[RMDB]
RNA sequence: GGGAACGACUCGAGUAGAGUCGAAAACCCGCUUAUCGGUAUCGAAUCAACGGUCAUAAGAGAUAAGCUAGCGUCCUAAUCUAUCCCGGGUUAUGGCGCGAAACUCAGGGAAUCGCUGUGUAUCAUCCUGCCCGUCGGAGGAGCCACAGUUAAAUUCGCAUUAUAAUUUGUUCGCAAAUUAUAAUGCAAAAGAAACAACAACAACAAC
Reactivity to DMS in 0.01 (KOAc 150mM, MgCl2 10mM, bicine 150mM(pH8.5), 24C), signal-to-noise 1, nucleotides 027 to 156: c030c000c020g000c080u000u000a020u000c090g020g000u010a080u000c030g040a130a210u000c090a100a070c000g030g020u010c060a200u000a120a120g020a160g010a080u000a050a020g030c030u000a300g000c010g010u010c010c040u000a030a030u000c010u000a100u000c050c040c000g000g010g000u010u000a010u000g030g050c000g040c020g010a060a040a050c080u000c070a100g010g000g010a110a090u000c090g010c010u010g000u010g000u010a080u000c030a050u000c000c000u010g050c000c030c120g050u030c060g000g020a040g020g030a130g010c040c020a050c020a060g000u000u000a020a100a290u000u000c040
Reactivity to 2A3 in 0.01 (KOAc 150mM, MgCl2 10mM, bicine 150mM(pH8.5), 24C), signal-to-noise 7, nucleotides 027 to 156: c010c000c010g000c000u010u010a020u000c020g060g060u110a010u040c010g050a150a090u140c070a130a180c030g000g020u020c030a040u070a300a080g080a020g000a050u010a000a010g000c000u010a000g000c000g000u000c000c000u010a000a010u000c000u010a040u040c000c000c000g000g000g000u000u000a010u020g000g000c000g000c000g010a020a020a010c150u180c270a170g000g000g000a010a030u120c080g000c000u000g000u010g020u050a070u180c050a140u010c030c000u090g250c040c030c050g290u220c190g030g020a010g010g000a010g020c020c000a000c000a000g010u050u090a040a120a070u160u160c070